[RMDB]
RNA sequence: GGGAACGACUCGAGUAGAGUCGAAAAGCAACCACCUUCGGGUGGUUGCAAAUGACGAUGCACGAUGACGAAGACCAAGAUGCUGAAGACGACGACGAACAAAAAGACCCACGUUCGCGUGGGUCAACCAAUGUAUACAGUUCGCUGUAUACAUUGGAAAAGAAACAACAACAACAAC
Reactivity to 2A3 in 0.01 (KOAc 150mM, MgCl2 10mM, bicine 150mM(pH8.5), 24C), signal-to-noise 8, nucleotides 027 to 126: g010c000a000a000c000c000a000c000c010u030u090c180g140g000g000u000g000g000u000u000g000c000a000a000a000u060g000a000c030g020a020u060g010c020a010c050g050a050u110g040a020c030g110a160a020g020a020c010c000a030a030g060a100u130g030c050u060g050a080a030g040a030c040g000a010c030g020a010c020g040a130a030c060a060a120a020a010a030g000a000c000c000c000a010c000g010u050u060c250g000c010g070u010g000g010g000u000c000a000a000
Reactivity to DMS in 0.01 (KOAc 150mM, MgCl2 10mM, bicine 150mM(pH8.5), 24C), signal-to-noise 6, nucleotides 027 to 126: g010c010a000a000c000c000a000c000c000u000u010c210g030g030g030u000g010g010u000u000g010c000a010a020a050u010g010a070c060g000a080u000g010c020a040c040g010a080u000g010a100c050g010a080a090g000a130c050c020a060a070g000a080u010g000c020u000g000a080a070g000a060c050g010a050c050g010a060c060g020a060a080c140a050a060a060a110a110g010a020c010c000c000a010c000g010u000u010c190g030c000g040u000g000g000g000u000c000a000a040
Overview: The record gives the reactivity of an RNA of 177 nucleotides to 2A3 and DMS. For 2A3 the reverse transcriptase was SuperScript II with manganese. Reactivities are given for positions 27 through 126. The 2A3 profile rests on 21,149 reads. The data come from the RNA Mapping Database (RMDB), library M2PK50.